[RMDB]
RNA sequence: GGGAACGACUCGAGUAGAGUCGAAAAUAAUCUUCUUGCUUGGAAUCGGAGUUCCAUUAUAGCUCUUGAAUGUUGCAGUAAGCUUCUUGGUCUUGGCGCUUGCCUUGUAUGUCUUGCUGCUUGUGGAGCAUUUUAAAUAGUUCGCUAUUUAAAAUGCAAAAGAAACAACAACAACAAC
Reactivity to 2A3 in 0.01 (KOAc 150mM, MgCl2 10mM, bicine 150mM(pH8.5), 24C), signal-to-noise 9, nucleotides 027 to 126: u140a010a070u040c030u080u020c020u050u120g060c020u030u050g050g040a070a070u080c060g070g020a080g060u050u010c010c010a040u100u100a120u120a090g000c010u020c020u110u140g100a190a080u210g070u180u110g060c010a000g000u020a010a000g000c010u000u010c000u000u030g030g010u030c030u050u110g070g030c050g010c070u040u060g010c000c000u020u020g100u130a050u020g070u050c010u000u000g000c000u000g010c010u010u020g020u020g030g030a050
Reactivity to DMS in 0.01 (KOAc 150mM, MgCl2 10mM, bicine 150mM(pH8.5), 24C), signal-to-noise 5, nucleotides 027 to 126: u050a090a090u030c040u010u000c020u010u000g010c050u020u010g010g010a060a080u010c070g000g000a110g000u010u010c050c050a090u010u040a090u030a070g020c030u010c020u010u020g010a100a070u020g010u020u000g010c000a020g010u000a010a010g000c010u010u010c000u000u010g010g010u000c110u000u010g020g010c020g010c050u000u010g010c000c000u000u000g000u020a010u000g010u020c020u000u000g020c000u000g010c010u010u010g020u000g000g000a270

Structure probing data (2A3 and DMS) for a 177-nucleotide construct. The data come from the RNA Mapping Database (RMDB), library OK1LIB. The DMS profile rests on 24,788 reads. The RNA was probed in 150 mM KOAc, 10 mM MgCl2 and 150 mM bicine (pH 8.5) at 24 C. For 2A3 the reverse transcriptase was SuperScript II with manganese.